[RMDB]
RNA sequence: GGGAACGACUCGAGUAGAGUCGAAAACUAAUUGUUCAGGCGUCAUCGUCAAGCGGUCUGAUAACUGUUGGUCAGCAGAAAGCAACGUUGCGCCAUUAUCAGCCACAAUGUUGACCUUAUCCAAAAAGCCACCGAAUAACAUCUGAACAUGUCGCAAAUAACUGGGAAUGUUCGCAUUCCCAGUUAUAAAAGAAACAACAACAACAAC
Reactivity to 2A3 in 0.01 (KOAc 150mM, MgCl2 10mM, bicine 150mM(pH8.5), 24C), signal-to-noise 4, nucleotides 027 to 156: c030u070a070a060u080u040g010u030u010c040a030g000g020c020g040u040c040a050u040c040g090u050c070a080a030g030c020g030g050u110c030u020g020a030u050a080a080c070u150g140u190u050g060g010u040c010a020g000c020a020g100a130a120a020g060c070a070a070c100g050u050u060g010c040g020c020c000a010u050u060a030u040c020a000g000c010c000a030c030a070a100u070g020u020u040g020a020c000c010u030u090a100u090c060c050a090a070a020a030a010g030c030c020a030c010c030g010a030a020u090a080a000c010a020u020c010u020g010a010a000c020a040u070g040u080c030g000c060a040a150
Reactivity to DMS in 0.01 (KOAc 150mM, MgCl2 10mM, bicine 150mM(pH8.5), 24C), signal-to-noise 3, nucleotides 027 to 156: c040u000a120a100u000u000g010u000u000c030a060g040g030c080g030u000c040a060u000c050g020u000c100a070a140g030c020g020g020u020c020u000g020a050u000a060a080c090u000g000u000u000g020g040u000c040a100g020c020a100g000a100a050a140g010c060a090a030c080g000u000u010g000c060g050c080c020a110u010u000a120u010c070a100g000c010c050a050c030a090a080u000g020u000u010g010a080c040c030u000u010a100u000c050c140a040a110a090a140a100g000c000c020a030c090c010g000a130a050u000a050a010c030a030u000c020u010g030a020a060c030a080u000g020u010c070g000c040a080a070
About this RNA: Chemical mapping of a 207-nucleotide RNA with 2A3 and DMS. Conditions: 150 mM KOAc, 10 mM MgCl2 and 150 mM bicine (pH 8.5), 24 C. The 2A3 profile rests on 3,236 reads. DMS adducts were read by reverse transcription with MarathonRT. 2A3 adducts were read by reverse transcription with SuperScript II with manganese.